[RMDB]
RNA sequence: GGGAACGACUCGAGUAGAGUCGAAAAAGCUAAGACAUCCUCUGCGCGUGAGGAGCUUCAGAGUACCCUGGUGUUUGAGGAAAUAGGUCGCCGCCUUGGGGAUAUCGGGCGUGAGGUGGUGAAGAAAGGUAAUAUUAUGCUUCGGCAUAAUAUUACCAAAAGAAACAACAACAACAAC
Reactivity to DMS in 0.01 (KOAc 150mM, MgCl2 10mM, bicine 150mM(pH8.5), 24C), signal-to-noise 4, nucleotides 027 to 126: a070g020c030u010a060a050g010a140c140a110u000c010c010u000c020u000g020c140g020c060g010u020g010a010g010g010a160g000c050u010u000c110a090g010a070g020u000a100c030c000c020u000g010g020u000g010u000u000u000g010a070g000g000a050a070a090u010a080g010g010u000c040g030c040c050g000c010c020u000u000g010g020g000g000a120u010a050u020c100g010g010g000c050g010u000g010a020g020g030u000g010g020u010g000a060a090g020a080a090a100
Reactivity to 2A3 in 0.01 (KOAc 150mM, MgCl2 10mM, bicine 150mM(pH8.5), 24C), signal-to-noise 3, nucleotides 027 to 126: a000g060c040u050a030a010g050a050c030a150u020c000c010u000c020u060g050c070g010c020g100u080g050a070g050g000a020g010c000u060u040c090a030g030a030g170u100a090c010c000c000u000g070g010u040g020u030u170u100g060a050g000g040a040a080a090u110a080g060g040u040c010g030c020c000g010c000c020u020u070g050g010g010g010a030u060a050u240c060g050g050g020c090g070u050g010a000g000g000u060g000g030u040g030a020a030g080a100a080a010